The record gives the reactivity of an RNA of 207 nucleotides to 2A3. It was measured as part of the RMDB library OK3TST. The RNA was probed in 150 mM KOAc, 10 mM MgCl2 and 150 mM bicine (pH 8.5) at 24 C.

RNA sequence: GGGAACGACUCGAGUAGAGUCGAAAAUGACACUUGUGAGCAGAGGCAGUGUCAGACCUUGCUUUUACAGCUGUCAGUCUGGGGUCUCGAACUUGAGCAAGCAGCAGAGUCCCUCGGAGGUGUGUUAAGCAGGUGGCUGGCUGGGCUCCACCCACAGCCCUAAGCGCUAAUUCGUUAGCGCUUAGGGAAAAGAAACAACAACAACAAC
Reactivity to 2A3 in 0.01 (KOAc 150mM, MgCl2 10mM, bicine 150mM(pH8.5), 24C), signal-to-noise 2, nucleotides 027 to 156: u090g010a030c010a050c070u140u090g010u040g040a040g090c050a040g050a070g080g050c020a030g020u010g040u160c040a000g040a020c010c000u040u140g010c010u000u080u110u120a030c020a060g050c000u100g140u220c020a070g050u010c020u080g000g000g000g020u030c000u000c010g080a130a050c030u060u100g040a040g170c040a030a050g040c070a030g050c020a020g000a010g020u050c030c020c030u010c030g020g020a030g000g090u030g010u000g000u070u000a010a000g000c040a020g000g040u030g070g020c030u000g010g000c000u020g000g080g010c000u000c020c000a000c000c000c000a030c010a030g040